[RMDB]
RNA sequence: GGGAACGACUCGAGUAGAGUCGAAAAGGAAGUCCAUAGCUCCGCGGGAGCGUGGCAAGCCUCACCGAUGCGUUAUCGUAAUCAAGGAUUGUCCAUGUCAUCAGAUGAACACGCGGACGAGUAUUCGCAUGUGAUAGUACUUCGGUACUAUCACAUGAAAAGAAACAACAACAACAAC
Reactivity to 2A3 in 0.01 (KOAc 150mM, MgCl2 10mM, bicine 150mM(pH8.5), 24C), signal-to-noise 7, nucleotides 027 to 126: g060g030a070a020g070u000c020c010a030u080a050g020c050u020c010c000g030c040g050g080g020a070g010c010g000u000g000g000c000a000a010g030c000c000u040c030a090c030c110g020a010u030g020c020g080u150u180a190u300c030g010u040a100a070u020c020a030a020g010g000a020u020u030g050u050c030c010a020u030g060u050c050a150u020c020a050g110a300u150g080a110a020c050a010c090g020c000g010g020a010c020g010a030g050u070a130u070u120c060g000
Reactivity to DMS in 0.01 (KOAc 150mM, MgCl2 10mM, bicine 150mM(pH8.5), 24C), signal-to-noise 8, nucleotides 027 to 126: g010g010a140a130g000u000c020c020a090u010a130g010c140u000c010c010g010c050g000g000g010a080g010c020g030u000g000g010c010a030a030g000c010c010u000c120a110c200c130g000a030u000g000c050g010u020u010a120u010c030g020u000a030a040u000c040a140a040g000g000a040u000u000g000u010c010c020a030u000g010u000c070a120u010c090a120g010a180u020g010a110a140c110a090c040g010c020g000g000a050c060g000a110g000u000a090u000u000c060g010
The record gives the reactivity of an RNA of 177 nucleotides to 2A3 and DMS.
Reactivities are given for positions 27 through 126.
The RNA was probed in 150 mM KOAc, 10 mM MgCl2 and 150 mM bicine (pH 8.5) at 24 C.